[RMDB]
RNA sequence: GGGAACGACUCGAGUAGAGUCGAAAACUGGGAUUACAGGCAUGAGCUACUGUGCCUGGCCUGAGGCAGUGUUUUUACAGACAGUCAGUACAAAUGGAAAUCACAGCAUUUCCCUAGUCCCUUUUUAAUGUGUCAUAGAACAUGGACCCUUUUGCUAACGCCUUUUAUACUUCGGUAUAAAAGGCGUAAAAGAAACAACAACAACAAC
Reactivity to 2A3 in 0.01 (KOAc 150mM, MgCl2 10mM, bicine 150mM(pH8.5), 24C), signal-to-noise 2, nucleotides 027 to 156: c020u020g020g010g010a020u070u080a030c010a020g000g000c000a020u050g060a020g100c030u060a070c030u100g040u030g010c000c000u000g050g000c000c000u040g020a040g030g000c060a090g050u000g040u040u020u010u100u150a040c030a050g010a010c020a000g040u050c000a010g030u080a070c040a010a060a060u080g000g000a050a000a020u040c040a080c020a230g030c050a020u010u010u020c000c000c000u000a020g010u010c000c000c000u070u060u000u000u180a100a080u120g020u000g020u020c030a090u050a200g070a080a010c060a110u070g070g020a080c000c000c000u020u030u100u050g000c060u020a030
Reactivity to DMS in 0.01 (KOAc 150mM, MgCl2 10mM, bicine 150mM(pH8.5), 24C), signal-to-noise 2, nucleotides 027 to 156: c010u000g030g010g020a120u000u000a080c060a030g040g020c030a080u000g010a210g070c070u000a070c050u010g030u000g050c040c000u000g020g020c040c050u010g020a110g010g020c030a130g000u000g010u000u000u000u010u030a150c100a130g000a040c050a080g010u000c070a070g020u000a170c100a030a120a120u000g010g000a060a040a060u000c010a090c070a080g000c060a070u010u000u000c000c030c020u000a070g020u000c000c010c060u000u000u000u000u000a050a100u000g020u000g020u000c030a180u000a090g010a100a050c040a000u000g020g000a220c020c040c010u000u000u000u020g010c060u010a120
The record gives the reactivity of an RNA of 207 nucleotides to 2A3 and DMS. The DMS profile rests on 2,613 reads. The 2A3 profile rests on 1,383 reads. Source: RMDB library OK3TST, as collected in RNAgym.